[RMDB]
The data come from the RNA Mapping Database (RMDB), library RFM100. An RNA of 177 nucleotides, treated with 2A3 and read out base by base. Conditions: 150 mM KOAc, 10 mM MgCl2 and 150 mM bicine (pH 8.5), 24 C.

RNA sequence: GGGAACGACUCGAGUAGAGUCGAAAAACGCCGUACGCGGCGAAGAUUUUCUGUUGUGCUUGAUCUAACCAUGUGCUUGCGAGGUAUGAGAAAAACAUGGUUCCGUCAAGCACCAUGGAACGUCAAAGAGACGCCAAUGUUUCGACAUUGGCGUCUCAAAAGAAACAACAACAACAAC
Reactivity to 2A3 in 0.01 (KOAc 150mM, MgCl2 10mM, bicine 150mM(pH8.5), 24C), signal-to-noise 2, nucleotides 027 to 126: a000c020g050c000c000g020u010a040c300g010c070g070g000c000g000a020a040g000a000u000u010u010u000c040u070g000u000u000g010u000g050c010u000u000g040a040u000c000u060a000a000c000c000a000u000g000u000g060c000u000u100g140c210g150a260g000g140u270a260u300g000a040g030a120a210a020a000a000c000a040u000g050g000u020u020c040c000g000u010c000a010a000g000c000a000c000c040a010u000g000g000a010a010c000g000u040c000a070a020a200